[RMDB]
RNA sequence: GGGAACGACUCGAGUAGAGUCGAAAAGAUAGCAAGUUCGCUUGCUAUCAAAAAACCGUAGGUGAAGCGUAGACAUGGCCAUUUCGAAAGAGAUGGUCCAACAGCUACGAACUACUUCACCUAAACGGAAAAAUGUAAGACGUUCGCGUCUUACAAACAAUUCUAGCACGUUCGCGUGCUAGAAUUGAAAAGAAACAACAACAACAAC
Reactivity to 2A3 in 0.01 (KOAc 150mM, MgCl2 10mM, bicine 150mM(pH8.5), 24C), signal-to-noise 3, nucleotides 027 to 156: g010a000u000a000g000c000a000a000g010u030u060c270g060c140u030u000g020c000u000a000u020c000a000a010a010a000a000a000c010c000g000u010a020g000g010u010g000a000a000g000c010g010u010a010g030a150c080a200u200g000g010c000c000a000u000u010u000c050g080a140a070a060g000a000g010a000u010g000g000u080c010c010a040a020c020a020g020c000u020a010c000g020a020a010c060u170a060c000u080u000c000a000c000c000u010a060a040a010c010g020g040a120a010a010a040a040u060g000u000a000a000g000a000c000g030u060u100c300g040c000g110u000c000u000u010a010c000a000a010a010
Reactivity to DMS in 0.01 (KOAc 150mM, MgCl2 10mM, bicine 150mM(pH8.5), 24C), signal-to-noise 1, nucleotides 027 to 156: g000a010u000a020g070c010a040a050g000u000u010c300g060c070u000u000g010c000u000a000u000c000a030a040a070a130a090a120c000c000g020u000a040g000g000u000g010a030a010g000c000g020u000a020g000a050c060a300u010g010g000c000c000a010u000u000u010c000g000a130a180a230g000a010g000a000u000g010g010u000c000c080a040a060c070a110g010c010u000a010c000g010a170a210c040u000a120c000u000u000c010a010c000c000u000a010a030a080c000g000g030a020a070a030a080a120u000g020u010a010a000g000a000c020g060u000u000c300g070c010g000u000c000u020u000a000c010a030a040a080